[RMDB]
RNA sequence: GGGAACGACUCGAGUAGAGUCGAAAAUGAACUGCUCCUGCGGAGCAGCCAUGGUGAUUCCCACCGGGUUGUAUUCAAACCAGUGGCGUGCGCGCAAGCGUCUAGCAGCCUCAGCGCUGCACCAAGGUCACACGUUCACAUUCGUGUGAACGUGUGAAAAAGAAACAACAACAACAAC
Reactivity to DMS in 0.01 (KOAc 150mM, MgCl2 10mM, bicine 150mM(pH8.5), 24C), signal-to-noise 2, nucleotides 027 to 126: u010g030a120a190c010u030g000c000u000c020c050u020g030c260g040g000a000g010c000a010g010c100c000a010u000g000g030u000g010a190u000u000c000c000c000a280c130c080g010g010g000u000u000g020u000a070u000u010c050a030a120a110c030c010a110g050u000g020g000c130g010u000g010c040g000c000g030c300a130a090g010c050g030u000c070u030a140g010c020a030g000c000c010u000c230a100g050c110g000c000u000g010c000a070c060c040a110a080g000g010